[RMDB]
RNA sequence: GGGAACGACUCGAGUAGAGUCGAAAAGUGGACGCUGUUGUAGUGUUGUGGGUCUGGUCUGGGUGUGCUAUUGAUGGCCCGCCCGUUCCAAGUUGCGUAGUGGACCGCCUGGGGCCUAUGCGAAAGCUGGGCCUCACGGUCCAUAAUGUGGCAGGCAUCAAAAACGAUAGUUCGCUAUCGUUUUUGAAAAAGAAACAACAACAACAAC
Reactivity to 2A3 in 0.01 (KOAc 150mM, MgCl2 10mM, bicine 150mM(pH8.5), 24C), signal-to-noise 2, nucleotides 027 to 156: g060u040g040g020a010c030g000c110u040g000u050u030g040u080a130g030u010g030u100u010g020u050g070g250g030u040c090u050g030g000u000c000u000g000g000g030u030g010u020g000c020u070a150u200u300g150a210u260g020g000c050c040c000g000c020c000c000g050u060u000c020c000a060a060g010u010u000g010c030g010u040a040g040u040g010g000a000c000c000g090c010c050u000g010g000g010g050c000c000u060a120u300g000c000g060a070a010a000g010c000u020g000g000g010c000c010u000c000a000c000g000g000u000c000c000a000u000a000a010u000g010u000g030g000c010a020g020g000c010a030